Notes: Conditions: 150 mM KOAc, 10 mM MgCl2 and 150 mM bicine (pH 8.5), 24 C. Chemical mapping of a 177-nucleotide RNA with DMS and 2A3.
[RMDB]
RNA sequence: GGGAACGACUCGAGUAGAGUCGAAAACUAGCGGAAUUCUCCGGACGGGUCUCCGACUCUGGCGAGGGCCGGUGGACCGCCAUCGCGGCGAUCGACGAGGGCGUGCCCGCGCCGGUGCUGACCACCGCCGUGGAGAGUAAUUCGUUACUCUCCACGGAAAAGAAACAACAACAACAAC
Reactivity to DMS in 0.01 (KOAc 150mM, MgCl2 10mM, bicine 150mM(pH8.5), 24C), signal-to-noise 3, nucleotides 027 to 126: c050u010a120g010c060g010g000a140a160u020u000c040u000c010c000g010g010a110c100g000g000g010u010c020u010c150c030g020a110c000u010c020u010g020g000c050g000a110g010g010g020c010c050g020g020u000g010g010a080c110c160g000c000c020a080u010c100g030c120g010g040c080g000a050u010c010g010a070c020g010a100g000g020g000c040g020u010g000c000c010c010g010c070g000c020c010g000g020u000g010c130u000g000a120c060c050a100c080c070g000
Reactivity to 2A3 in 0.01 (KOAc 150mM, MgCl2 10mM, bicine 150mM(pH8.5), 24C), signal-to-noise 3, nucleotides 027 to 126: c010u050a020g070c020g040g070a090a120u210u020c050u030c070c000g010g060a050c050g110g010g000u010c050u030c070c040g130a150c020u000c050u070g030g030c040g040a040g010g030g000c040c010g010g020u030g050g000a040c030c050g020c020c010a070u110c140g020c080g090g030c060g050a060u160c010g160a160c010g020a110g000g120g010c030g020u100g000c000c010c000g000c030g000c000c010g010g000u000g000c040u050g000a040c010c020a040c000c040g040
Description: For 2A3 the reverse transcriptase was SuperScript II with manganese. High DMS reactivity at an A or C suggests that its Watson-Crick edge is free. The DMS profile rests on 2,865 reads.